RNA sequence: GGGAACGACUCGAGUAGAGUCGAAAAGAAGAGAAAGGAGACACAAGGACAGUCUCCAGAGGUUCCUAAGGCCUCGAUCGCGCCUGCCGGGAAUCAUGGACCCCCGGUUGUCCAUGAUAGAAGAAGAGAUUUUAUCCUCCUUCGGGAGGAUAAAAUCAAAAGAAACAACAACAACAAC
Reactivity to DMS in 0.01 (KOAc 150mM, MgCl2 10mM, bicine 150mM(pH8.5), 24C), signal-to-noise 2, nucleotides 027 to 126: g040a100a130g020a120g000a050a190a150g000g000a040g000a010c010a050c190a170a090g000g050a160c130a110g010u000c000u000c000c000a050g010a040g010g000u000u000c000c100u000a130a050g000g000c000c010u000c030g020a040u030c060g000c120g000c090c050u000g010c060c140g000g020g030a070a030u030c000a030u010g000g000a010c000c080c020c040c020g020g000u000u000g000u000c000c030a030u000g000a030u030a060g020a090a110g010a050a030g000a170
Reactivity to 2A3 in 0.01 (KOAc 150mM, MgCl2 10mM, bicine 150mM(pH8.5), 24C), signal-to-noise 1, nucleotides 027 to 126: g080a030a000g050a000g050a100a010a050g040g000a010g000a000c010a020c110a300a000g190g000a030c000a010g000u000c000u000c000c000a000g000a000g000g040u050u080c040c000u190a100a020g100g000c000c000u090c090g010a100u040c020g020c010g010c000c000u000g140c010c000g080g000g000a100a000u010c000a010u010g050g000a000c030c020c020c040c060g080g090u100u060g020u000c000c000a000u000g020a040u020a150g200a240a020g070a060a000g050a000
Source: RMDB library OK1LIB, as collected in RNAgym. Chemical mapping of a 177-nucleotide RNA with DMS and 2A3.